[RMDB]
RNA sequence: GGGAACGACUCGAGUAGAGUCGAAAAGAUAUGGACGUCCUCUGUAGGGAUAACCAUCACGACGAAGCUUCCUCGGAAACGAGGAAGCAGAGUGAUGGCUAAUACCUACAGAGGGACGUCCUAAGUCGAAAGGUAAUAGCUUCGGCUAUUACCUUUCAAAAGAAACAACAACAACAAC
Reactivity to 2A3 in 0.01 (KOAc 150mM, MgCl2 10mM, bicine 150mM(pH8.5), 24C), signal-to-noise 4, nucleotides 027 to 126: g040a040u140a080u290g000g000a000c000g010u020c000c000u000c000u010g010u000a000g010g010g010a030u020a030a010c000c000a000u010c000a010c090g300a120c050g010a140a010g020c000u000u000c000c000u020c000g020g050a090a070a050c020g000a000g000g010a010a000g000c000a000g000a000g000u020g000a000u000g000g000c000u040a070a020u180a210c010c000u000a000c010a000g000a010g000g010g000a000c000g000u000c000c000u010a010a010g120u050c100
Reactivity to DMS in 0.01 (KOAc 150mM, MgCl2 10mM, bicine 150mM(pH8.5), 24C), signal-to-noise 4, nucleotides 027 to 126: g010a100u010a300u010g010g010a000c010g020u000c000c000u000c000u000g010u000a000g010g000g010a130u000a140a110c000c000a010u000c000a010c000g000a240c300g010a120a150g000c000u000u000c010c000u000c000g010g010a110a090a240c010g010a010g000g010a000a000g030c000a000g010a060g020u000g000a000u000g000g000c000u000a120a090u000a130c010c000u000a010c000a020g000a030g010g000g000a000c000g010u000c000c000u000a010a100g000u000c130